Structure probing data (2A3 and DMS) for a 177-nucleotide construct. Conditions: 150 mM KOAc, 10 mM MgCl2 and 150 mM bicine (pH 8.5), 24 C. The data come from the RNA Mapping Database (RMDB), library OK1LIB. For 2A3 the reverse transcriptase was SuperScript II with manganese.

[RMDB]
RNA sequence: GGGAACGACUCGAGUAGAGUCGAAAAGAAAAUAAAAUCGUCAGAUUUCGGUUAACGGCGAGAAAGACGUAUGAACCUCCCAGUUGACCAGUGUACAAUGCCAGGUAUCUCCGCAAUACUGUACGGCACUCCGCUUGAAAUUCGUUUCAAGCGGAGUAAAAGAAACAACAACAACAAC
Reactivity to 2A3 in 0.01 (KOAc 150mM, MgCl2 10mM, bicine 150mM(pH8.5), 24C), signal-to-noise 2, nucleotides 027 to 126: g000a010a000a000a000u300a030a030a000a120u110c070g070u000c000a000g030a170u010u030u110c110g060g000u040u030a140a000c000g010g040c070g000a000g100a020a030a000g110a080c030g190u200a110u120g020a040a050c000c000u000c000c000c010a010g000u010u020g000a000c000c000a000g050u000g000u010a030c000a030a000u180g070c010c000a020g000g000u070a010u060c170u040c000c030g080c050a030a030u040a140c000u060g040u110a060c000g020g000c000
Reactivity to DMS in 0.01 (KOAc 150mM, MgCl2 10mM, bicine 150mM(pH8.5), 24C), signal-to-noise 3, nucleotides 027 to 126: g010a120a060a060a090u030a060a030a160a040u000c000g020u000c060a070g030a190u000u010u020c030g000g030u000u020a060a130c210g000g000c090g020a030g020a070a070a180g020a030c080g000u010a040u060g010a100a040c100c010u010c040c000c000a100g000u020u000g000a060c120c110a100g030u030g020u010a050c210a100a050u010g000c000c020a130g000g000u000a000u010c010u020c100c030g050c130a040a050u000a020c070u000g000u030a070c120g020g000c070